[RMDB]
RNA sequence: GGGAACGACUCGAGUAGAGUCGAAAAGAUAUGGAGCGUUGGCUUCUAUGAAGUGUAUGGAGGCUCGAGAUAUAUCGGAAACGAUAUAUCUCGAGUGAAGUACAUGGAGAAGAGACGCUCCUAAGUCCUGUAACGGAAAGUUCGCUUUCCGUUACAGAAAAGAAACAACAACAACAAC
Reactivity to DMS in 0.01 (KOAc 150mM, MgCl2 10mM, bicine 150mM(pH8.5), 24C), signal-to-noise 2, nucleotides 027 to 126: g000a180u020a300u020g000g010a010g040c010g040u000u010g000g010c010u010u000c000u000a260u000g000a200a300g000u010g000u000a000u000g010g000a300g000g030c010u000c000g000a030g030a010u000a020u000a010u000c000g050g020a260a120a200c000g000a020u000a000u000a000u010c000u000c010g000a010g000u000g000a160a280g000u010a000c010a010u010g000g010a030g020a000a000g000a300g040a050c000g000c000u010c010c010u010a040a050g000u000c000
Reactivity to 2A3 in 0.01 (KOAc 150mM, MgCl2 10mM, bicine 150mM(pH8.5), 24C), signal-to-noise 1, nucleotides 027 to 126: g080a060u140a050u300g050g040a020g000c060g000u020u100g300g220c010u010u000c030u060a300u090g040a010a070g030u020g000u050a030u040g040g010a030g300g170c020u020c000g010a020g000a000u010a000u000a010u000c000g030g000a050a040a070c060g030a000u000a000u010a000u020c010u000c000g010a000g000u040g000a010a000g000u000a020c010a010u010g080g000a040g000a000a000g000a010g010a000c010g050c010u000c000c000u030a000a000g010u030c040